[RMDB]
RNA sequence: GGGAACGACUCGAGUAGAGUCGAAAAGGGGUCUGACACUUUGAUCGUCGUUUGUCAGCAAGUACUGAAGCCUCCACGGUACAUUGCUUGGAUUUAACGACGGGAGUGUCAGACGGAGGCACCCAAACCUUUCCGAAGGUUCGCCUUCGGAAAGGAAGUAAAUGUACUAGUUCGCUAGUACAUUUACAAAAGAAACAACAACAACAAC
Reactivity to DMS in 0.01 (KOAc 150mM, MgCl2 10mM, bicine 150mM(pH8.5), 24C), signal-to-noise 2, nucleotides 027 to 156: g010g010g020g010u000c010u000g000a020c020a020c020u050u010u000g020a080u000c020g040u000c030g010u010u000u000g010u000c000a070g030c020a030a070g000u000a020c000u000g000a030a140g000c040c010u000c030c020a300c010g000g040u000a000c000a120u000u000g030c000u000u000g040g010a140u000u000u000a040a030c010g010a020c020g020g020g010a020g020u000g000u000c010a010g010a010c010g000g020a030g070g050c050a150c020c000c010a090a090a160c000c000u000u000u000c000c000g000a060a020g000g010u000u010c300g000c010c000u010u000c000g000g000a000a000a010g010g010a010a090
Reactivity to 2A3 in 0.01 (KOAc 150mM, MgCl2 10mM, bicine 150mM(pH8.5), 24C), signal-to-noise 8, nucleotides 027 to 156: g050g010g080g020u010c000u000g000a000c000a000c010u150u240u150g110a130u190c010g000u000c000g020u010u020u040g060u020c060a040g000c000a010a010g010u000a000c000u030g060a150a050g010c000c010u000c000c020a030c010g000g000u040a120c150a300u010u020g000c020u090u290g200g030a100u290u300u110a010a010c000g000a000c000g010g030g000a000g000u000g000u000c000a000g000a000c000g000g000a000g000g000c010a050c000c010c000a050a120a190c000c000u000u000u000c000c000g000a000a000g040g030u030u070c280g100c030c000u010u000c000g000g020a000a000a000g000g000a010a000
The record gives the reactivity of an RNA of 207 nucleotides to DMS and 2A3. For DMS, 5,644 sequencing reads were counted. The data come from the RNA Mapping Database (RMDB), library RNAMAK. The 2A3 profile rests on 12,421 reads. Conditions: 150 mM KOAc, 10 mM MgCl2 and 150 mM bicine (pH 8.5), 24 C.